[RMDB]
RNA sequence: GGGAACGACUCGAGUAGAGUCGAAAAGAUAUUAUUGAGUCUAAAGGGUCCGUAGCCGGCUUUGCAAGUCCCCUGGGAAAUCCAGCGGCUUAACCGUUGGGCUUUCAUGGGAUACUACAUUGCUUGGGUAUAUGGUCUAGUUCGCUAGACCAUAUACAAAAGAAACAACAACAACAAC
Reactivity to DMS in 0.01 (KOAc 150mM, MgCl2 10mM, bicine 150mM(pH8.5), 24C), signal-to-noise 2, nucleotides 027 to 126: g000a140u000a070u020u000a110u010u020g010a070g020u000c000u010a070a130a200g020g010g020u000c040c090g020u000a130g010c020c010g000g000c030u010u000u000g000c000a020a030g000u000c100c000c010c100u000g000g010g000a020a040a060u000c000c000a000g010c010g000g000c150u020u020a100a200c000c000g010u000u000g010g000g010c110u000u000u000c000a050u000g000g000g010a060u000a030c030u000a060c020a010u000u000g020c000u000u000g040g000
Reactivity to 2A3 in 0.01 (KOAc 150mM, MgCl2 10mM, bicine 150mM(pH8.5), 24C), signal-to-noise 2, nucleotides 027 to 126: g030a020u130a070u260u150a060u080u220g030a020g060u030c040u080a130a090a080g070g020g000u060c100c000g040u080a010g140c010c010g040g030c060u030u050u010g000c000a030a000g030u010c000c000c040c000u040g070g000g000a010a060a010u030c010c000a000g000c020g040g020c050u050u130a070a110c000c000g000u030u000g030g000g020c010u050u040u010c010a010u010g010g000g000a000u000a030c010u000a000c000a050u050u000g030c030u080u120g080g000
The record gives the reactivity of an RNA of 177 nucleotides to DMS and 2A3. The RNA was probed in 150 mM KOAc, 10 mM MgCl2 and 150 mM bicine (pH 8.5) at 24 C.